[RMDB]
The data come from the RNA Mapping Database (RMDB), library OK2TST. Chemical mapping of a 177-nucleotide RNA with DMS and 2A3. Reactivities are given for positions 27 through 126. For DMS, 2,098 sequencing reads were counted. The 2A3 profile rests on 2,411 reads. For DMS the reverse transcriptase was MarathonRT.

RNA sequence: GGGAACGACUCGAGUAGAGUCGAAAAGGGUGGUCGACCAGAUCGUUGUCGGAGUCGGUGCGCACAAAUGCGACUAGGUCAGCGACUGUCUCACAGGCAUACAGGUUGUCGUCCUUGCCGAGAAACACCCGUAAUUAGGGUUCGCCCUAAUUACGGGAAAAGAAACAACAACAACAAC
Reactivity to DMS in 0.01 (KOAc 150mM, MgCl2 10mM, bicine 150mM(pH8.5), 24C), signal-to-noise 3, nucleotides 027 to 126: g000g010g030u000g000g040u000c020g020a030c070c110a090g030a160u010c080g010u010u000g030u000c000g010g000a050g030u000c030g020g010u020g010c130g000c110a050c200a020a120a070u000g020c010g010a040c030u000a080g010g010u000c010a010g030c020g000a070c030u000g000u000c040u000c070a100c150a170g020g000c010a080u000a110c130a110g010g010u000u010g000u000c090g010u000c000c030u000u010g020c030c000g020a120g010a090a110a120c190a160
Reactivity to 2A3 in 0.01 (KOAc 150mM, MgCl2 10mM, bicine 150mM(pH8.5), 24C), signal-to-noise 3, nucleotides 027 to 126: g010g020g000u030g030g030u150c040g010a000c030c010a010g020a270u130c060g040u040u040g040u020c030g060g020a020g010u020c020g030g080u170g190c050g000c050a040c050a090a160a060u270g120c040g030a060c060u070a040g160g080u090c010a000g000c010g000a020c030u030g030u030c000u000c020a100c090a040g000g000c000a040u040a180c040a070g000g050u000u030g040u050c020g030u040c000c000u000u070g030c050c010g050a130g040a080a110a020c070a030
Source information
2A3 adducts were read by reverse transcription with SuperScript II with manganese. The reactions ran in a buffer of 150 mM KOAc, 10 mM MgCl2 and 150 mM bicine (pH 8.5), at 24 C.